[RMDB]
RNA sequence: GGGAACGACUCGAGUAGAGUCGAAAAGGAGCUCGAGAUGUUCUUAGGUCAACUAAGGGCAUCUGUAUGUUCUAAGUUGACCUUAGGGCAUACUGUAGUGUUUAGCUGUACUAAGCACUAUAGAUAGGGUUUAGUACAGCUAAGCCCUGUCCGAGCACGAGACGUGUAUGUUCGCAUACACGUUUCGAAAAGAAACAACAACAACAAC
Reactivity to DMS in 0.01 (KOAc 150mM, MgCl2 10mM, bicine 150mM(pH8.5), 24C), signal-to-noise 5, nucleotides 027 to 156: g030g010a140g020c010u000c000g010a130g010a030u000g010u000u000c000u000u000a020g000g020u000c080a050a000c000u000a140a060g010g000g000c000a010u000c100u000g000u010a030u000g010u010u000c000u000a110a060g020u000u000g010a060c100c010u000u000a010g000g000g010c000a010u000a030c000u000g010u000a060g030u000g020u000u000u000a010g010c000u000g000u010a300c000u000a010a010g010c010a040c000u000a100u000a100g010a180u000a010g000g010g030u000u000u000a010g000u000a040c070a080g010c000u000a000a010g000c010c020c020u000g010u000c030c010g010a030g030c010a280
Reactivity to 2A3 in 0.01 (KOAc 150mM, MgCl2 10mM, bicine 150mM(pH8.5), 24C), signal-to-noise 5, nucleotides 027 to 156: g110g010a060g000c000u000c000g060a060g010a030u000g000u020u010c000u000u020a000g000g000u020c010a010a000c000u020a020a060g000g010g000c000a010u000c020u010g000u080a010u000g000u000u000c000u010a040a000g000u000u010g020a010c020c000u000u000a000g000g000g000c000a000u050a100c000u020g060u100a000g000u000g000u010u000u010a000g000c010u000g000u010a010c000u000a000a000g020c010a000c020u010a020u120a140g150a050u170a010g000g000g000u000u000u000a000g000u000a000c000a000g000c000u000a000a000g000c010c000c000u010g060u020c020c010g000a000g000c000a010